[RMDB]
The record gives the reactivity of an RNA of 177 nucleotides to DMS and 2A3. For DMS, 16,304 sequencing reads were counted. For DMS the reverse transcriptase was MarathonRT. Values are in units of 0.01, from 0 to 300, in steps of 10. The RNA was probed in 150 mM KOAc, 10 mM MgCl2 and 150 mM bicine (pH 8.5) at 24 C.
RNA sequence: GGGAACGACUCGAGUAGAGUCGAAAACUUCGGCGAUGGCCCGGCGCUGAUCGGGGGUAAACCCCGUGGUCCCGAUGACCAUCCGCUUCCCGGCGCGCCGGCACAGCUCGAGAUGCUGUAGGGUAGCCGAGCCUAAUUAAUUCGUUAAUUAGGCUCGAAAAGAAACAACAACAACAAC
Reactivity to DMS in 0.01 (KOAc 150mM, MgCl2 10mM, bicine 150mM(pH8.5), 24C), signal-to-noise 9, nucleotides 027 to 126: c130u000u000c050g010g020c040g000a140u010g000g010c130c020c030g010g010c100g020c010u010g000a070u010c010g010g000g000g000g010u010a070a120a280c030c010c020c040g030u000g000g010u000c080c110c170g010a130u010g000a050c010c010a030u010c090c080g000c060u000u000c010c010c010g010g010c040g010c050g010c000c010g010g020c090a050c030a060g000c010u000c100g010a130g010a130u000g000c010u000g000u000a090g000g000g010u000a120g020c100
Reactivity to 2A3 in 0.01 (KOAc 150mM, MgCl2 10mM, bicine 150mM(pH8.5), 24C), signal-to-noise 7, nucleotides 027 to 126: c020u100u070c020g020g000c040g050a060u070g060g010c020c080c050g010g010c020g000c030u060g050a230u050c000g000g000g000g010g040u130a130a220a250c010c000c000c010g020u010g000g000u010c040c060c060g090a140u250g020a030c010c000a020u040c030c040g030c010u200u160c000c000c000g000g000c010g000c010g000c000c000g030g000c030a010c010a020g020c010u070c110g130a140g020a080u130g010c020u010g020u100a090g010g010g060u060a020g030c020